[RMDB]
RNA sequence: GGGAACGACUCGAGUAGAGUCGAAAAUAAGCAAAAGACAACCACCUUUCCCGCUGACAAUAGCGUUAUCCGUCUGCACUUCGGUAAUAUGAGGGCACAGUAAAUCCCGCAAGGAUGAGAAUGUGAUUAAACAGUUACAGCUUCGGCUGUAACUGAACAUAAACACAAAGUUCGCUUUGUGUUUAUGAAAAGAAACAACAACAACAAC
Reactivity to DMS in 0.01 (KOAc 150mM, MgCl2 10mM, bicine 150mM(pH8.5), 24C), signal-to-noise 5, nucleotides 027 to 156: u010a070a110g020c070a060a080a110a130g000a130c040a120a110c020c020a110c070c030u000u000u000c030c000c000g030c080u000g010a120c090a070a100u000a070g020c060g020u010u010a050u010c040c020g020u000c030u010g010c050a060c070u000u000c050g010g000u000a070a100u000a090u000g020a060g010g020g020c050a070c030a100g010u000a040a090a110u000c000c000c020g030c140a090a140g030g010a060u000g010a120g000a090a100u000g020u000g010a160u000u000a060a080a140c010a010g010u010u000a010c000a010g020c000u000u010c300g060g010c020u000g010u000a010a000c000u000g010a030a110
Reactivity to 2A3 in 0.01 (KOAc 150mM, MgCl2 10mM, bicine 150mM(pH8.5), 24C), signal-to-noise 9, nucleotides 027 to 156: u150a020a020g060c050a050a040a070a020g090a070c050a040a050c040c030a050c010c030u020u070u050c020c010c000g000c040u040g020a050c050a090a170u070a120g030c030g060u080u060a050u100c030c020g040u020c070u080g030c040a050c080u050u060c040g040g030u070a060a040u080a130u210g040a070g010g030g000c020a000c000a020g020u040a000a030a030u010c010c000c010g080c070a030a030g030g010a010u040g000a010g010a050a020u050g010u020g020a030u070u240a080a080a030c000a000g000u000u000a000c000a010g000c000u020u090c180g080g000c000u000g000u000a000a000c000u000g000a000a000
Notes:
Source: RMDB library M2RFPK, as collected in RNAgym. Chemical mapping of a 207-nucleotide RNA with DMS and 2A3. 2A3 adducts were read by reverse transcription with SuperScript II with manganese. Values are in units of 0.01, from 0 to 300, in steps of 10. DMS adducts were read by reverse transcription with MarathonRT.